[RMDB]
The data come from the RNA Mapping Database (RMDB), library OK1LIB.
An RNA of 177 nucleotides, treated with DMS and 2A3 and read out base by base.
For DMS the reverse transcriptase was MarathonRT.
The reactions ran in a buffer of 150 mM KOAc, 10 mM MgCl2 and 150 mM bicine (pH 8.5), at 24 C.
For DMS, 2,589 sequencing reads were counted.
2A3 adducts were read by reverse transcription with SuperScript II with manganese.
RNA sequence: GGGAACGACUCGAGUAGAGUCGAAAAGUGGUCGAGUGCGAAGCACUGGGGUAGAGAAAUAAAAAGAAAGAGAACUCCCCCGUCAGUCAGUCACUCUCUGUCUGAAUCUCUCUCUCAAAGACCACGAGGUACCGUAUCCUUUCGAGGAUACGGUACCAAAAGAAACAACAACAACAAC
Reactivity to DMS in 0.01 (KOAc 150mM, MgCl2 10mM, bicine 150mM(pH8.5), 24C), signal-to-noise 2, nucleotides 027 to 126: g020u000g000g010u010c000g000a010g000u000g000c000g000a170a080g000c000a000c000u000g000g000g000g010u000a010g000a020g000a000a050a080u040a050a110a140a160a060g000a030a080a010g000a000g010a040a140c100u030c010c000c000c090c110g000u000c170a110g000u030c060a050g000u000c080a100c080u040c040u000c000u000g000u000c010u040g000a180a150u000c050u000c000u000c020u010c000u000c050a090a050a110g000a020c000c000a000c000g000a090
Reactivity to 2A3 in 0.01 (KOAc 150mM, MgCl2 10mM, bicine 150mM(pH8.5), 24C), signal-to-noise 2, nucleotides 027 to 126: g010u000g000g000u000c000g010a020g000u030g000c120g180a180a010g000c020a020c000u000g010g040g000g020u080a000g000a010g090a010a090a110u250a050a190a050a000a000g150a030a100a000g050a000g030a080a010c020u020c000c000c000c000c000g070u060c000a000g000u000c000a000g000u050c030a030c160u060c000u010c010u030g070u010c010u030g060a120a070u020c000u000c000u000c000u000c000u030c090a080a090a000g000a000c000c000a000c000g000a050